[RMDB]
RNA sequence: GGGAACGACUCGAGUAGAGUCGAAAAAGUGACCGGGGUGCACGCCGUGCACGCCUAUCCGCGAACAGCGUCGGUGGUGAUCUGGUACUCGCCAGAGCUCGGUGACACCGCCGCCGUGCUGUCGGCGGGGUAGGCUGUCGUUCGCGACAGCCUACCCAAAAGAAACAACAACAACAAC
Reactivity to DMS in 0.01 (KOAc 150mM, MgCl2 10mM, bicine 150mM(pH8.5), 24C), signal-to-noise 2, nucleotides 027 to 126: a080g030u000g000a160c060c040g020g000g030g020u000g020c030a030c020g020c280c160g020u000g020c010a000c010g000c010c030u000a060u010c030c030g030c000g000a070a000c010a030g020c010g000u000c000g000g020u000g000g010u010g000a110u000c000u000g010g000u000a090c140u020c160g000c030c050a040g000a030g010c130u000c060g000g020u000g010a160c080a150c040c010g010c020c010g030c040c010g000u010g000c030u000g000u010c030g020g000c050g000
Reactivity to 2A3 in 0.01 (KOAc 150mM, MgCl2 10mM, bicine 150mM(pH8.5), 24C), signal-to-noise 2, nucleotides 027 to 126: a000g170u070g050a020c020c010g000g000g010g000u020g000c050a010c060g300c220c280g000u010g040c000a010c010g230c000c030u050a090u020c020c030g030c020g030a030a040c020a010g020c000g060u070c000g030g000u010g010g010u020g040a100u000c000u000g000g050u070a160c100u060c180g020c040c020a020g010a050g020c040u050c160g090g060u120g020a040c040a000c050c030g000c000c000g000c000c010g040u050g010c030u020g020u040c000g080g090c020g000
Structure probing data (DMS and 2A3) for a 177-nucleotide construct. Reactivities are given for positions 27 through 126. It was measured as part of the RMDB library OK2TRN.